The record gives the reactivity of an RNA of 207 nucleotides to 2A3 and DMS. The DMS profile rests on 2,277 reads. The reactions ran in a buffer of 150 mM KOAc, 10 mM MgCl2 and 150 mM bicine (pH 8.5), at 24 C.

RNA sequence: GGGAACGACUCGAGUAGAGUCGAAAACGCUGGGGCAUACCAGGGAGAUCAAGAUGAGUAGGGAGAAUACUGAAGCGCGCACGGUAUUCAUCGAUCUAUUGAGAUCAUCGAUCUGGUAUGCCCUGUGCUGAAGCGCGCACGGCAACCGAAAGGUGCGGUAGCGUAAGUAGUUCGCUACUUACGCUACAAAAGAAACAACAACAACAAC
Reactivity to 2A3 in 0.01 (KOAc 150mM, MgCl2 10mM, bicine 150mM(pH8.5), 24C), signal-to-noise 4, nucleotides 027 to 156: c030g000c010u020g000g000g010g000c010a000u010a000c000c010a000g010g020g000a020g000a000u020c040a060a040g110a190u300g080a060g080u020a010g010g020g000a030g000a000a000u000a000c010u030g060a250a040g020c000g010c000g000c000a010c010g000g010u010a050u010u000c020a070u300c020g010a010u000c000u020a020u020u130g060a090g010a030u010c010a010u300c020g000a000u000c000u010g000g020u000a010u000g000c000c000c000u000g000u000g000c000u010g010a110a060g000c010g000c000g000c010a000c010g010g000c010a000a010c000c000g040a090a030a010g000g000u020g020c030g020
Reactivity to DMS in 0.01 (KOAc 150mM, MgCl2 10mM, bicine 150mM(pH8.5), 24C), signal-to-noise 1, nucleotides 027 to 156: c050g020c060u000g000g030g010g030c020a030u000a030c020c040a000g000g000g010a060g000a030u000c040a080a220g010a270u000g000a150g030u000a020g040g000g000a090g040a090a020u010a030c020u000g000a000a040g020c010g050c010g010c000a300c020g000g020u000a000u010u010c000a160u000c110g020a060u010c040u010a050u010u010g000a300g010a040u000c030a210u010c080g000a120u010c000u000g000g000u000a020u010g000c010c000c020u020g000u010g020c030u000g000a000a040g010c000g090c020g000c000a160c060g030g010c020a000a180c010c030g000a050a110a240g020g040u000g000c020g030